[RMDB]
RNA sequence: GGGAACGACUCGAGUAGAGUCGAAAAUCGUCUAACCCUAAAGAGAAAGGCGUAGGUGCUUGGCCUUGGCGACUCGCCCGCUGUUUUUUGGCUGGCUUUCAGCGGGUGAAGAGGCCCAAGACCUACCGCCACCCACCGUCUAGUGUCUUAAGGGCACGAGUGCGUAUAGGUUCGCCUAUACGCACUCAAAAGAAACAACAACAACAAC
Reactivity to 2A3 in 0.01 (KOAc 150mM, MgCl2 10mM, bicine 150mM(pH8.5), 24C), signal-to-noise 2, nucleotides 027 to 156: u090c040g070u020c090u100a140a170c020c010c020u100a140a130a000g110a020g040a060a160a070g030g010c000g000u000a000g000g010u130g170c010u000u010g000g010c000c030u000u030g090g050c040g100a100c020u010c030g010c000c000c000g020c000u000g000u000u050u000u000u040u050g140g010c080u060g010g000c040u010u000u010c000a000g000c000g000g000g000u000g000a010a030g010a000g010g000c050c020c000a000a000g010a000c000c000u000a000c000c030g000c000c000a010c000c000c000a090c040c030g010u020c050u070a050g010u000g000u020c000u090u140a110a110g060g000g000c040a000c040